[RMDB]
RNA sequence: GGGAACGACUCGAGUAGAGUCGAAAAUAGCCGUUAUGCGCGACGCGGUGUAGCGUCACUUUGAUGGCGGUACUAUGAAUUGAUGCAAGGUGUGGAGCGACCUUAAACAGUUCUGGUGGUGCUCUGAAAAACAAAUAGGCGUUCGCGCCUAUUUGAAUCAGAUUUCCUUCUUCGGAAGGAAAUCUGAAAAAGAAACAACAACAACAAC
Reactivity to 2A3 in 0.01 (KOAc 150mM, MgCl2 10mM, bicine 150mM(pH8.5), 24C), signal-to-noise 2, nucleotides 027 to 156: u090a010g020c010c000g020u040u070a040u090g150c090g000c010g020a010c000g010c000g040g070u160g070u190a020g020c000g030u040c010a030c060u180u100u220g110a070u060g030g040c000g010g030u010a010c010u050a030u130g020a060a030u070u070g050a050u130g050c050a050a020g030g000u000g040u050g050g000a020g000c000g000a020c000c000u010u070a090a070a000c030a020g010u050u000c050u050g020g020u030g010g080u050g030c010u020c040u040g030a160a010a010a020a000c030a000a000a000u000a000g000g000c020g030u050u040c240g030c000g000c030c000u000a000u000u000u010g000a000a000
Structure probing data (2A3) for a 207-nucleotide construct. The RNA was probed in 150 mM KOAc, 10 mM MgCl2 and 150 mM bicine (pH 8.5) at 24 C. Source: RMDB library M2RFPK, as collected in RNAgym.